RNA sequence: GGGAACGACUCGAGUAGAGUCGAAAAUGAUGUAAAGGUUGCGUUGAAUUUUGAAUUGUUCUCUCAAGUUAGCAGGCAGGUGCACUUUUCUCUUUUACGAAGGACUUCGAGUGCACUGGGGUCAGCACCUCUUUUUAGACUUCGGUCUAAAAAGAGGAAAAGAAACAACAACAACAAC
Reactivity to DMS in 0.01 (KOAc 150mM, MgCl2 10mM, bicine 150mM(pH8.5), 24C), signal-to-noise 1, nucleotides 027 to 126: u000g030a080u020g020u010a020a060a080g000g010u010u000g010c120g010u000u000g040a040a140u000u020u000u010g010a090a150u000u000g010u000u010c040u000c060u010c070a100a120g010u010u010a050g040c010a050g020g040c070a180g010g000u000g010c010a010c020u000u000u000u040c080u000c000u020u000u010u010a120c170g010a050a040g020g000a020c300u000u000c120g020a010g010u000g010c000a020c000u000g000g010g000g010u000c020a050g030c100a160
Record summary:
The record gives the reactivity of an RNA of 177 nucleotides to DMS. The reactions ran in a buffer of 150 mM KOAc, 10 mM MgCl2 and 150 mM bicine (pH 8.5), at 24 C. Reactivities are given for positions 27 through 126. The data come from the RNA Mapping Database (RMDB), library RFMREP. High DMS reactivity at an A or C suggests that its Watson-Crick edge is free.